[RMDB]
RNA sequence: GGGAACGACUCGAGUAGAGUCGAAAACAGUGGAGAAGAUGGUUCCCCUCAUUGCAGGAGUCUUCAUACAGGAUCUGAGGCUCUGUCUGGGUCUGAGAAGAAAUAAGAUUUGUCUAGGGAUUUUGCUGGUAAGGCUAAGGGAACCUAGAGAAGAGAACUAGCCUAAUUACUUCGGUAAUUAGGCUAGAAAAGAAACAACAACAACAAC
Reactivity to DMS in 0.01 (KOAc 150mM, MgCl2 10mM, bicine 150mM(pH8.5), 24C), signal-to-noise 2, nucleotides 027 to 156: c100a130g030u010g000g030a060g020a020a090g020a090u000g000g020u000u020c030c010c000c060u000c040a090u020u010g040c030a120g020g020a110g010u010c030u010u020c020a150u000a130c100a110g040g020a160u010c020u000g010a160g030g030c030u000c060u000g020u020c080u000g000g010g030u000c020u000g010a180g000a050a090g000a030a090a040u000a080a070g000a190u010u010u000g020u000c020u000a080g020g000g000a190u000u000u000u000g000c040u010g000g030u000a070a120g010g000c040u040a040a260g010g000g000a070a070c000c000u000a120g010a100g010a070a080g000a140g000a120a270
Reactivity to 2A3 in 0.01 (KOAc 150mM, MgCl2 10mM, bicine 150mM(pH8.5), 24C), signal-to-noise 1, nucleotides 027 to 156: c090a010g070u100g070g030a060g020a090a000g030a100u090g040g000u040u040c000c000c000c020u010c030a210u170u230g000c040a020g070g090a030g030u030c000u120u010c100a030u110a090c070a020g090g000a120u090c120u070g020a020g020g010c000u060c050u070g090u080c110u030g010g060g000u000c020u000g050a060g000a060a040g040a020a160a030u200a130a020g050a090u070u070u090g120u010c020u030a020g060g060g000a140u000u020u070u140g030c000u020g000g040u170a210a020g030g000c020u020a000a060g000g000g010a030a020c000c000u000a000g030a000g000a130a000g040a010g100a040a040
Structure probing data (DMS and 2A3) for a 207-nucleotide construct.
The 2A3 profile rests on 487 reads.
Reactivities are given for positions 27 through 156.
The DMS profile rests on 2,264 reads.
The reactions ran in a buffer of 150 mM KOAc, 10 mM MgCl2 and 150 mM bicine (pH 8.5), at 24 C.
DMS (dimethyl sulfate) methylates the pairing face of unpaired adenines and cytosines.